Chemical mapping of a 177-nucleotide RNA with 2A3 and DMS.
RNA sequence: GGGAACGACUCGAGUAGAGUCGAAAAACAACACGCUUCGGCGUGUUGUCGACGGAGGAAGCUGAGGACGCGCUUGUGCCGCAGCAGGGAAGCGCAGGGUAAAUCAGAGGUGAUUCGUCACCUCUAACAGUCCAGGUUAGUUCGCUAACCUGGACUGAAAAGAAACAACAACAACAAC
Reactivity to 2A3 in 0.01 (KOAc 150mM, MgCl2 10mM, bicine 150mM(pH8.5), 24C), signal-to-noise 2, nucleotides 027 to 126: a010c010a000a000c000a010c020g010c000u000u060c200g170g000c010g020u030g020u000u000g010u000c000g050a040c060g010g050a060g030g070a140a030g010c000u020g020a040g010g060a040c050g000c000g060c110u140u160g070u150g090c000c010g040c040a020g020c010a030g000g000g060a110a000g030c040g000c070a040g020g000g000u050a080a070a010u150c050a050g000a010g000g000u020g020a030u000u050c080g050u000c070a000c000c000u000c000u010a010a000
Reactivity to DMS in 0.01 (KOAc 150mM, MgCl2 10mM, bicine 150mM(pH8.5), 24C), signal-to-noise 3, nucleotides 027 to 126: a030c010a000a010c000a000c000g010c010u000u020c180g030g030c000g040u000g000u000u000g010u000c030g000a090c100g020g010a070g020g000a070a080g010c040u010g000a050g010g010a060c080g000c080g010c100u000u010g020u000g000c020c000g000c050a070g010c090a120g010g000g000a030a050g000c090g010c050a120g000g000g010u000a070a100a090u020c100a040g030a020g000g000u000g000a050u000u010c230g000u000c010a010c000c000u000c010u000a020a130

Description
For DMS, 2,306 sequencing reads were counted. It was measured as part of the RMDB library M2PK50. The 2A3 profile rests on 2,402 reads. The reactions ran in a buffer of 150 mM KOAc, 10 mM MgCl2 and 150 mM bicine (pH 8.5), at 24 C.